[RMDB]
RNA sequence: GGGAACGACUCGAGUAGAGUCGAAAACUACUUGCUUACUCCUUUCACCACAACCACAAUACUGGACAGUAAGUAAAGUUGGAUUUUGAAGGGGCUCUUUCUUUAGCCAUGAAGAGCUAACGGAUGCACUACGUUACUAGUUCGCUAGUAACGUAGUAAAAGAAACAACAACAACAAC
Reactivity to 2A3 in 0.01 (KOAc 150mM, MgCl2 10mM, bicine 150mM(pH8.5), 24C), signal-to-noise 6, nucleotides 027 to 126: c010u030a010c000u020u020g000c000u020u020a020c010u030c020c000u040u070u100c060a060c080c000a060c050a130a080c020c040a060c030a170a140u120a130c040u020g040g030a040c040a070g020u050a040a010g000u020a120a090a010g020u070u100g130g070a160u100u120u100u260g050a040a020g070g010g020g000c020u010c010u040u210u010c020u050u140u120a030g010c020c010a050u130g070a030a030g040a020g010c010u010a100a020c030g050g010a020u090g050c030
Reactivity to DMS in 0.01 (KOAc 150mM, MgCl2 10mM, bicine 150mM(pH8.5), 24C), signal-to-noise 7, nucleotides 027 to 126: c020u000a030c040u000u000g000c020u000u000a030c030u000c040c030u010u000u000c090a280c060c050a060c100a070a130c100c120a090c220a080a130u010a080c160u000g000g000a090c180a060g010u000a010a020g000u000a030a040a060g010u000u010g010g000a160u000u000u010u000g010a070a070g010g010g000g010c120u000c030u000u000u000c020u000u000u000a050g010c060c090a100u000g010a070a040g000a060g000c010u010a040a050c090g010g000a070u000g010c180

Source: RMDB library OK2TRN, as collected in RNAgym. The record gives the reactivity of an RNA of 177 nucleotides to 2A3 and DMS. Values cover nucleotides 27 to 126. As a SHAPE reagent, 2A3 marks flexible, mostly unpaired nucleotides at the ribose 2'-OH.